[RMDB]
RNA sequence: GGGAACGACUCGAGUAGAGUCGAAAAAGAAACAGGAAGUAAAGGAGGAAGCGCACGGCAAUCCAGAAAAACACUGAAUGCCGUACAGUGACCACUCGAAAGCGCAAAUAAAACUUCCUGAAAAAAACACAAUACCAUACUUCGGUAUGGUAUUGUGAAAAGAAACAACAACAACAAC
Reactivity to DMS in 0.01 (KOAc 150mM, MgCl2 10mM, bicine 150mM(pH8.5), 24C), signal-to-noise 2, nucleotides 027 to 126: a090g010a190a100a120c000a010g010g010a030a040g030u010a070a070a110g030g000a080g030g000a120a300g000c030g010c020a050c000g000g000c010a030a120u010c060c020a040g030a050a070a080a100a130c300a060c050u020g000a010a040u000g000c000c010g010u010a050c090a020g000u000g000a150c080c090a050c010u000c030g020a050a130a060g000c090g000c090a060a080a080u000a040a050a060a030c010u010u000c000c000u000g010a000a000a040a050a030a060a110
Reactivity to 2A3 in 0.01 (KOAc 150mM, MgCl2 10mM, bicine 150mM(pH8.5), 24C), signal-to-noise 2, nucleotides 027 to 126: a020g070a000a080a000c010a000g000g010a000a010g000u100a130a060a040g090g020a040g020g020a090a060g010c000g000c020a000c000g010g000c000a030a080u010c020c010a010g100a070a120a020a020a000c030a010c020u030g010a030a020u020g000c000c000g000u020a020c010a010g010u020g110a090c030c040a040c040u040c050g110a130a030a030g070c030g000c050a030a070a170u080a030a100a010a000c010u010u010c000c000u010g030a030a000a000a000a000a010a000

Description: The record gives the reactivity of an RNA of 177 nucleotides to DMS and 2A3. The RNA was probed in 150 mM KOAc, 10 mM MgCl2 and 150 mM bicine (pH 8.5) at 24 C. For 2A3 the reverse transcriptase was SuperScript II with manganese. Reactivities are rounded to 0.1 and cut off at 0 and 3. For DMS, 2,051 sequencing reads were counted.